[RMDB]
RNA sequence: GGGAACGACUCGAGUAGAGUCGAAAACAUUGCCAAUCAGCUGUCAUUAACCACGCAAGACUGUAACGGAGUGCUAAAUUACCGUGUGAAUACCAUAACAAAGAUUGGUCACUCGGAGGAGGCGCUUUGUUAUUACGAGGUUCGCCUCGUAAUAACAAAAAGAAACAACAACAACAAC
Reactivity to 2A3 in 0.01 (KOAc 150mM, MgCl2 10mM, bicine 150mM(pH8.5), 24C), signal-to-noise 5, nucleotides 027 to 126: c040a060u110u130g060c020c020a020a120u070c010a020g070c000u040g030u060c020a060u110u100a090a040c060c030a030c050g040c020a040a070g060a140c020u060g020u150a070a050c050g050g000a020g010u060g020c060u100a100a130a050u110u110a100c000c020g000u020g010u000g030a100a070u090a120c000c010a010u040a120a070c100a190a160a020g120a140u080u010g030g020u020c010a000c000u040c010g000g010a020g010g040a010g010g020c000g000c000u000u010
Reactivity to DMS in 0.01 (KOAc 150mM, MgCl2 10mM, bicine 150mM(pH8.5), 24C), signal-to-noise 4, nucleotides 027 to 126: c130a090u010u010g010c010c040a030a140u010c070a090g000c000u010g000u000c020a060u010u010a080a160c070c070a070c130g000c070a030a040g020a040c040u010g020u000a090a030c080g000g010a020g030u010g010c020u000a030a070a120u050u050a090c020c000g010u000g000u000g020a170a120u030a300c030c010a010u000a080a130c260a070a100a090g010a170u040u020g000g000u000c050a010c010u030c040g000g000a070g000g010a260g000g000c020g000c000u000u000